RNA sequence: GGGAACGACUCGAGUAGAGUCGAAAAGGGGUCGAUCACAACAGCCGAUGAUGGAGCUUGGACCUAUACUGAAGCCUCCACGGUAUAGCUAGCUCCACAUCGGACAUGUGAUCGACGGAGGCACCCAAACUGUUGUGCAGUUCGCUGCACAACAGAAGAACAAGAUACUGUUCGCAGUAUCUUGUUCAAAAGAAACAACAACAACAAC
Reactivity to 2A3 in 0.01 (KOAc 150mM, MgCl2 10mM, bicine 150mM(pH8.5), 24C), signal-to-noise 6, nucleotides 027 to 156: g050g010g100g010u000c000g000a000u000c000a010c030a160a260c070a160g120c010c020g000a010u020g080a170u020g000g010a010g010c060u140u300g100g020a050c010c000u000a000u000a000c000u020g060a140a020g000c000c000u000c000c000a010c000g000g000u000a000u000a000g010c020u010a000g000c000u000c000c000a000c000a000u000c020g000g020a010c000a060u170g000u000g000a000u000c000g000a000c000g000g000a010g000g000c000a030c000c000c010a060a110a060c000u000g000u010u000g000u000g000c000a010g000u030u080c240g070c120u000g000c000a000c000a000a000c000a000g000a020a030
Reactivity to DMS in 0.01 (KOAc 150mM, MgCl2 10mM, bicine 150mM(pH8.5), 24C), signal-to-noise 2, nucleotides 027 to 156: g010g030g020g050u000c000g000a010u000c020a000c000a010a100c220a190g000c000c000g020a010u020g000a160u000g020g020a010g010c000u000u000g040g000a040c300c020u000a020u000a010c000u020g000a030a090g000c000c020u000c000c010a300c050g000g000u010a030u000a020g010c000u000a060g020c010u000c000c010a030c020a000u000c000g000g050a010c020a080u000g000u000g000a020u000c020g000a010c000g000g010a040g080g010c000a170c000c010c010a080a060a300c000u000g020u000u000g000u010g000c000a040g010u000u000c300g000c020u000g000c000a000c010a010a010c000a020g000a050a150
Structure probing data (2A3 and DMS) for a 207-nucleotide construct. The reactions ran in a buffer of 150 mM KOAc, 10 mM MgCl2 and 150 mM bicine (pH 8.5), at 24 C. DMS (dimethyl sulfate) methylates the pairing face of unpaired adenines and cytosines. DMS adducts were read by reverse transcription with MarathonRT.